Chemical mapping of a 177-nucleotide RNA with DMS and 2A3.
For 2A3 the reverse transcriptase was SuperScript II with manganese.
It was measured as part of the RMDB library OK1LIB.
Conditions: 150 mM KOAc, 10 mM MgCl2 and 150 mM bicine (pH 8.5), 24 C.

RNA sequence: GGGAACGACUCGAGUAGAGUCGAAAAACAAGGCACUGUUGACAACAGAGUAGCAGAUGAUCUAGGCCUGACUCCUGAGCAAAGGACUGAGGUUACUCAGCUUAUUGACAGGCUUGCAAGGGGCAGACACACUUGAGAUCUUCGGAUCUCAAGUGUGAAAAGAAACAACAACAACAAC
Reactivity to DMS in 0.01 (KOAc 150mM, MgCl2 10mM, bicine 150mM(pH8.5), 24C), signal-to-noise 3, nucleotides 027 to 126: a070c060a060a110g040g010c010a010c020u000g000u010u010g030a070c140a060a090c170a110g010a100g000u000a050g020c030a080g020a030u000g000a070u050c070u010a070g030g010c000c010u000g000a090c050u030c060c010u020g010a140g040c070a030a070a130g000g000a050c050u000g020a070g000g020u010u020a050c010u020c000a040g000c010u000u010a100u000u000g020a110c010a020g000g000c110u020u000g000c060a070a050g000g010g000g050c110a050g000a290
Reactivity to 2A3 in 0.01 (KOAc 150mM, MgCl2 10mM, bicine 150mM(pH8.5), 24C), signal-to-noise 3, nucleotides 027 to 126: a010c070a050a000g100g020c020a020c090u040g080u110u110g050a050c020a190a000c070a070g140a050g050u030a040g090c070a000g020a150u110g010a060u040c070u090a050g100g060c020c000u070g030a170c060u010c060c000u010g040a050g090c020a140a070a000g030g010a070c060u010g010a030g200g020u180u120a190c020u000c040a000g010c000u100u100a130u120u010g060a040c030a020g000g000c000u020u040g030c040a090a050g000g000g040g000c020a000g040a060